[RMDB]
RNA sequence: GGGAACGACUCGAGUAGAGUCGAAAACGACGUGGCCGCCGCGGGUCGGGAACCGGAUCGAUACGUCGCGGAUGUCGAUCAUCGGUGCGUCGCUCAUCGUGCGGCCUGCGUGAGCCAUGCCGGAUCAAAUAUCCCAUUAUUUCGAUAAUGGGAUAUUAAAAGAAACAACAACAACAAC
Reactivity to 2A3 in 0.01 (KOAc 150mM, MgCl2 10mM, bicine 150mM(pH8.5), 24C), signal-to-noise 9, nucleotides 027 to 126: c010g040a000c020g020u010g000g010c010c010g060c070c040g000c030g000g000g010u040c030g010g050g030a030a020c020c010g010g010a010u010c010g000a010u010a080c070g050u060c070g090c050g170g040a100u050g040u030c030g040a030u030c020a060u130c020g040g000u040g020c030g090u100c040g030c040u070c020a210u150c040g070u070g080c000g010g000c000c000u000g000c000g010u020g010a020g000c000c000a010u020g010c010c010g030g020a040u130c070a020
Reactivity to DMS in 0.01 (KOAc 150mM, MgCl2 10mM, bicine 150mM(pH8.5), 24C), signal-to-noise 9, nucleotides 027 to 126: c020g010a020c020g030u000g010g020c000c010g010c300c030g020c090g010g010g020u000c010g020g010g010a130a050c050c020g010g000a010u000c010g000a020u000a040c100g000u000c120g020c090g000g000a200u000g010u000c040g000a020u000c010a070u010c010g010g020u000g010c060g010u010c070g020c080u000c110a080u010c090g010u000g020c010g000g000c000c000u000g000c010g010u000g010a210g000c010c020a020u000g010c020c010g010g000a120u010c120a090